This 177-nucleotide RNA was probed chemically with DMS and 2A3. For DMS the reverse transcriptase was MarathonRT. Source: RMDB library M2PK50, as collected in RNAgym. Conditions: 150 mM KOAc, 10 mM MgCl2 and 150 mM bicine (pH 8.5), 24 C. For 2A3, 1,114 sequencing reads were counted.
RNA sequence: GGGAACGACUCGAGUAGAGUCGAAAAAUAGUGUUAUUCGUAACACUAUAUAUCCGAACUCAAGGAUUCGUUCCAGAGACAUGCAUGCUAGGAUGAAAGCAACUGAACAAGCGUUCGCGCUUGUUAACGUCUUAUGCCCUUUCGAGGGCAUAAGACGAAAAGAAACAACAACAACAAC
Reactivity to DMS in 0.01 (KOAc 150mM, MgCl2 10mM, bicine 150mM(pH8.5), 24C), signal-to-noise 1, nucleotides 027 to 126: a010u000a030g020u000g020u010u000a000u000u000c260g040u010a010a030c010a000c000u020a000u000a030u000a170u010c080c020g030a120a070c000u000c020a060a110g010g000a020u010u000c020g020u010u000c050c010a160g020a070g000a110c070a050u000g010c070a080u000g000c020u000a000g000g000a100u000g020a180a230a070g000c060a010a120c120u030g000a040a010c000a000a010g000c000g000u010u010c220g000c000g000c000u000u000g000u000u000a050a070
Reactivity to 2A3 in 0.01 (KOAc 150mM, MgCl2 10mM, bicine 150mM(pH8.5), 24C), signal-to-noise 1, nucleotides 027 to 126: a000u000a010g000u000g000u000u000a000u020u070c260g040u040a000a000c010a000c000u000a000u010a020u000a010u000c050c030g050a170a060c010u000c020a040a060g090g000a050u000u020c020g020u000u010c000c000a000g030a000g010a060c090a060u220g010c000a010u050g030c040u020a040g020g150a170u070g120a100a000a010g040c030a040a050c050u150g010a000a000c030a010a010g010c000g010u020u070c160g030c000g000c050u000u010g000u020u020a040a000